[RMDB]
RNA sequence: GGGAACGACUCGAGUAGAGUCGAAAACUAAUACUGUUGCUAACAUGCAACUCUGUUGUAUAAAAAUUGGAAUUGCACUUUAGCAAUGGUGAUGGAAAAGGAUGGUAGUGCUUCGGCACUACCAUCCGACCCAAAAAAACUUCGGUUUUUUUGGGUCAAAAGAAACAACAACAACAAC
Reactivity to DMS in 0.01 (KOAc 150mM, MgCl2 10mM, bicine 150mM(pH8.5), 24C), signal-to-noise 2, nucleotides 027 to 126: c020u010a090a100u020a030c020u000g030u000u000g000c000u000a010a010c110a100u000g010c000a010a010c040u000c020u000g000u000u000g010u020a130u020a060a130a060a070a030u000u010g020g000a020a040u000u010g020c000a000c150u000u000u000a000g000c010a000a000u000g000g000u000g000a130u010g010g000a070a050a140a180g010g000a010u000g010g010u000a010g010u000g000c000u000u010c210g020g020c000a020c000u010a000c000c000a000u000c000c000
Reactivity to 2A3 in 0.01 (KOAc 150mM, MgCl2 10mM, bicine 150mM(pH8.5), 24C), signal-to-noise 1, nucleotides 027 to 126: c010u040a040a100u180a160c000u010g000u000u000g000c010u010a030a030c000a070u000g000c030a030a020c000u000c000u030g260u160u080g180u120a170u140a150a080a080a050a020u200u230g000g000a010a030u020u010g000c000a020c060u010u020u040a010g010c020a000a030u070g060g000u000g030a080u200g070g040a070a020a040a130g000g010a010u010g000g010u000a000g030u010g010c020u070u130c260g010g020c010a000c000u000a000c000c000a000u000c000c020